[RMDB]
RNA sequence: GGGAACGACUCGAGUAGAGUCGAAAAAUUGAAAAUAUGUGCGGGGGUAAAUCCUUUGCAGACGACUUGAAUCAGAGCGGGGUACUGUAAGCAGUAGAGUAGCCUUGUUGCUACGAUCUGCUGAGGUCCCAUUGUGAAUCUUCGGAUUCACAAUGGGAAAAGAAACAACAACAACAAC
Reactivity to DMS in 0.01 (KOAc 150mM, MgCl2 10mM, bicine 150mM(pH8.5), 24C), signal-to-noise 2, nucleotides 027 to 126: a070u020u000g010a080a130a100a080u030a040u070g000u020g000c000g000g000g030g040g000u050a000a130a080u080c000c000u000u010u010g080c000a010g030a140c040g040a000c030u000u010g030a050a200u010c070a110g030a080g010c030g090g000g000g000u070a080c040u000g000u020a150a000g000c020a000g000u040a020g000a300g000u000a000g000c000c050u040u010g040u000u040g010c010u010a010c020g010a180u000c000u010g030c000u000g010a240g000g020u000
Reactivity to 2A3 in 0.01 (KOAc 150mM, MgCl2 10mM, bicine 150mM(pH8.5), 24C), signal-to-noise 3, nucleotides 027 to 126: a000u130u110g040a040a040a010a040u230a080u120g090u010g000c000g010g030g000g000g000u110a040a100a190u190c020c000u040u000u230g020c000a030g030a090c010g030a020c000u040u040g090a060a010u090c050a100g000a010g040c040g010g020g000g040u060a030c000u040g010u100a010a020g000c000a010g020u210a040g020a030g050u000a010g010c000c030u090u290g150u230u170g000c010u000a000c000g010a040u000c010u000g000c000u000g010a050g030g030u000
An RNA of 177 nucleotides, treated with DMS and 2A3 and read out base by base. The data come from the RNA Mapping Database (RMDB), library RFM100. For 2A3, 1,378 sequencing reads were counted. The reactions ran in a buffer of 150 mM KOAc, 10 mM MgCl2 and 150 mM bicine (pH 8.5), at 24 C.